[RMDB]
RNA sequence: GGGAACGACUCGAGUAGAGUCGAAAACGUCGUCGCCGAUGAUCUCGUCGUCACUGAGAAUGGGCUCAAACUGCUCUUGCGGCGUGCACGAUCGGUCCUCAUCGUCCCGAUCCCGUUCACCACGGUGGGUAGCGAGUGGUUUCGACCACUCGCUACCAAAAGAAACAACAACAACAAC
Reactivity to 2A3 in 0.01 (KOAc 150mM, MgCl2 10mM, bicine 150mM(pH8.5), 24C), signal-to-noise 3, nucleotides 027 to 126: c040g000u010c000g010u020c030g010c010c020g050a120u080g010a050u060c030u040c110g110u000c050g070u050c070a030c190u130g050a030g040a140a080u120g040g010g000c020u010c010a140a190a180c060u060g000c000u000c000u000u080g070c020g000g000c020g050u100g040c090a040c060g060a060u030c030g010g010u000c000c000u060c010a010u010c020g020u000c040c010c000g040a060u080c010c000c000g010u050u030c080a120c190c000a050c040g020g050u140g020